[RMDB]
This 177-nucleotide RNA was probed chemically with 2A3 and DMS. The DMS profile rests on 2,278 reads.

RNA sequence: GGGAACGACUCGAGUAGAGUCGAAAAAGUUAUGUAAUUUAUGUAAGAUUACACAGCUACAUAAAUGGACAAUCUGAAACAUUGUUAAACCAGGGCUUUGAACACAAUUCCACACACCAUGGAGUCACCAGUAAAUGGUUUUCGAACCAUUUACUGGAAAAGAAACAACAACAACAAC
Reactivity to 2A3 in 0.01 (KOAc 150mM, MgCl2 10mM, bicine 150mM(pH8.5), 24C), signal-to-noise 3, nucleotides 027 to 126: a000g080u100u070a090u080g010u030a080a110u010u030u030a080u080g020u030a080a130g030a140u070u220a020c060a010c000a050g050c020u020a010c010a060u080a040a060a020u040g000g030a010c020a040a040u000c030u120g080a120a010a000c020a040u040u080g030u070u100a110a040a020c020c000a030g000g040g010c060u020u040u150g080a100a010c050a000c020a130a080u030u040c010c000a020c000a010c050a030c050c010a030u030g020g000a020g030u050c040a030
Reactivity to DMS in 0.01 (KOAc 150mM, MgCl2 10mM, bicine 150mM(pH8.5), 24C), signal-to-noise 3, nucleotides 027 to 126: a050g020u000u010a040u020g000u010a060a020u020u000u000a050u040g010u020a100a110g000a080u010u000a060c100a060c150a100g000c040u000a050c070a070u010a030a040a040u000g000g010a050c010a030a030u010c020u000g010a130a120a130c270a040u010u010g000u000u010a030a100a100c090c030a050g000g010g000c080u020u000u010g010a050a050c090a040c100a050a110u010u000c030c020a050c070a060c070a080c060c030a110u000g000g000a050g000u000c130a120